RNA sequence: GGGAACGACUCGAGUAGAGUCGAAAAGUGAGACUCAGUCUCAGAGUCUGUCUGUCUCUCACAGAGUCUCUGAGAGAGAGACAGAGUGUCAGUGAGUGUCAGACACAGUCUGUGUGUCUCUGAGACAUAGGUGAGAGGUAUUCGUACCUCUCACCUAAAAAGAAACAACAACAACAAC
Reactivity to 2A3 in 0.01 (KOAc 150mM, MgCl2 10mM, bicine 150mM(pH8.5), 24C), signal-to-noise 2, nucleotides 027 to 126: g060u060g040a050g040a050c010u030c090a040g020u020c010u000c000a000g020a010g030u000c020u030g030u000c010u000g170u000c010u020c000u010c020a040c020a050g130a120g190u070c070u010c040u150g010a040g010a010g000a000g010a010g010a030c020a000g020a000g000u040g040u010c090a090g060u070g260a110g050u040g030u060c030a020g030a020c000a010c000a060g170u200c080u180g190u040g050u050g000u060c010u000c000u010g010a010g000a010c020a060
Reactivity to DMS in 0.01 (KOAc 150mM, MgCl2 10mM, bicine 150mM(pH8.5), 24C), signal-to-noise 3, nucleotides 027 to 126: g000u000g030a090g010a140c030u000c030a160g000u010c020u000c010a040g010a060g010u000c020u000g000u000c010u000g000u000c000u000c000u010c010a080c090a120g000a130g010u000c100u010c080u000g020a080g000a050g000a030g000a020g010a010c010a040g000a040g020u010g010u000c020a070g000u010g020a090g010u010g000u000c050a060g000a050c000a030c050a080g010u010c140u020g000u000g020u000g010u010c010u010c030u000g000a020g000a010c020a200